Description
An RNA of 177 nucleotides, treated with 2A3 and DMS and read out base by base. Source: RMDB library TTRDEL, as collected in RNAgym. The reactions ran in a buffer of 150 mM KOAc, 10 mM MgCl2 and 150 mM bicine (pH 8.5), at 24 C. For DMS, 19,461 sequencing reads were counted.

RNA sequence: GGGAACGACUCGAGUAGAGUCGAAAAGAUAUGGACAAGGAACUACGUUUAGCCACGCUUUGAUCUCGGAAACGAGGGAGCGUGACUAAACGCCUUGUCCUAAGUCAAACACAGCUUCGGCUGUGAACAUAUAGGUAGCGUUCGCGCUACCUAUAUGAAAAGAAACAACAACAACAAC
Reactivity to 2A3 in 0.01 (KOAc 150mM, MgCl2 10mM, bicine 150mM(pH8.5), 24C), signal-to-noise 4, nucleotides 027 to 126: g030a020u080a050u160g010g010a010c000a000a010g060g010a100a070c150u170a060c300g000u010u000u000a010g000c010c010a010c010g020c010u230u260u120g110a150u100c000u010c000g020g050a110a100a080c020g000a010g000g000g000a000g000c000g000u010g000a000c000u000a000a000a000c000g000c000c000u000u010g000u000c000c000u000a000a000g000u000c010a000a060a030c010a000c000a000g020c010u110u170c300g200g000c000u010g000u000g010a030a010
Reactivity to DMS in 0.01 (KOAc 150mM, MgCl2 10mM, bicine 150mM(pH8.5), 24C), signal-to-noise 9, nucleotides 027 to 126: g010a040u010a300u010g000g000a010c000a010a010g010g010a140a050c110u010a300c020g010u000u000u000a000g000c000c000a000c000g000c000u000u000u010g000a070u020c000u000c010g010g000a090a050a190c010g000a020g010g000g000a000g010c000g020u000g000a010c000u000a000a010a000c000g000c000c000u000u000g000u000c000c000u000a010a090g010u000c030a100a100a210c010a010c000a000g010c000u000u010c200g030g010c000u000g000u000g000a070a170